[RMDB]
RNA sequence: GGGAACGACUCGAGUAGAGUCGAAAACUUGUGGCUGUGAAGAUAUAUCCUCUUCAAUGAUGACGGCUCGCUGCUGAAAUUCAUCAGCAGUAACAUCUACAGUAGGAAUAGCGCUUUGCUGCGCCUCACUGAAUCUCUAGUUCGCUAGAGAUUCAGUAAAAGAAACAACAACAACAAC
Reactivity to 2A3 in 0.01 (KOAc 150mM, MgCl2 10mM, bicine 150mM(pH8.5), 24C), signal-to-noise 6, nucleotides 027 to 126: c030u080u120g030u040g080g000c020u020g020u020g050a020a010g010a020u040a010u030a150u150c000c010u000c020u110u060c080a070a130u170g000a010u030g030a030c060g090g060c040u060c120g000c010u030g010c000u000g020a100a210a200u300u140c080a100u010c000a060g000c000a010g000u010a030a040c010a010u000c020u060a050c030a100g120u190a020g040g020a060a050u020a040g110c110g010c080u030u050u080g000c020u040g040c050g010c030c000u010c030
Reactivity to DMS in 0.01 (KOAc 150mM, MgCl2 10mM, bicine 150mM(pH8.5), 24C), signal-to-noise 6, nucleotides 027 to 126: c040u010u000g020u000g010g020c020u000g020u000g000a040a050g000a080u010a080u010a130u000c040c020u000c030u000u000c140a080a120u000g010a060u000g000a150c110g020g010c110u010c150g020c000u000g010c020u000g020a010a140a180u010u010c260a090u000c010a000g000c000a000g010u010a060a090c040a040u000c010u000a130c210a030g010u010a020g000g010a030a050u000a060g000c130g000c040u000u000u010g010c050u010g010c220g000c030c050u010c080
An RNA of 177 nucleotides, treated with 2A3 and DMS and read out base by base. The reactions ran in a buffer of 150 mM KOAc, 10 mM MgCl2 and 150 mM bicine (pH 8.5), at 24 C. The data come from the RNA Mapping Database (RMDB), library OK2TRN. Reactivities are given for positions 27 through 126. For DMS, 6,764 sequencing reads were counted. The 2A3 profile rests on 8,331 reads. In probing experiments dimethyl sulfate is read out at A N1 and C N3, which are open when not base-paired.